Structure probing data (2A3 and DMS) for a 177-nucleotide construct. 2A3 adducts were read by reverse transcription with SuperScript II with manganese.
RNA sequence: GGGAACGACUCGAGUAGAGUCGAAAACUGCUCUCGUUCGCGAGAGCAGAAAUAAUAAACGCUAGAAAACGAUCAAUACUAGCGAAAUACAUAACGAUCGAAAAAGAAGUCACUUCGGUGACUUCAACGUCUUUAAUAACUUCGGUUAUUAAAGACGAAAAGAAACAACAACAACAAC
Reactivity to 2A3 in 0.01 (KOAc 150mM, MgCl2 10mM, bicine 150mM(pH8.5), 24C), signal-to-noise 5, nucleotides 027 to 126: c000u000g010c000u000c000u000c000g030u060u040c130g020c020g090a000g010a000g010c000a000g000a000a000a000u030a000a000u070a030a140a010c020g000c000u010a010g040a080a070a040a070c030g020a030u020c010a050a050u040a210c010u010a000g000c010g020a090a020a020u170a020c060a040u140a090a090c070g020a010u020c010g020a070a020a010a030a050g010a010a000g000u000c000a000c010u030u110c220g060g000u000g000a000c000u010u000c000a000a000
Reactivity to DMS in 0.01 (KOAc 150mM, MgCl2 10mM, bicine 150mM(pH8.5), 24C), signal-to-noise 3, nucleotides 027 to 126: c000u010g010c000u000c000u000c000g050u010u020c240g040c010g020a010g030a000g000c000a010g000a030a040a060u010a110a160u000a080a100a150c040g000c010u000a000g000a120a060a060a060c020g000a000u010c000a200a040u010a090c000u000a000g000c010g000a060a070a100u010a100c180a090u010a050a120c150g020a010u000c010g000a130a110a050a140a140g000a010a010g000u000c000a010c010u000u000c180g030g020u000g000a010c000u010u000c000a040a080
DMS adducts were read by reverse transcription with MarathonRT.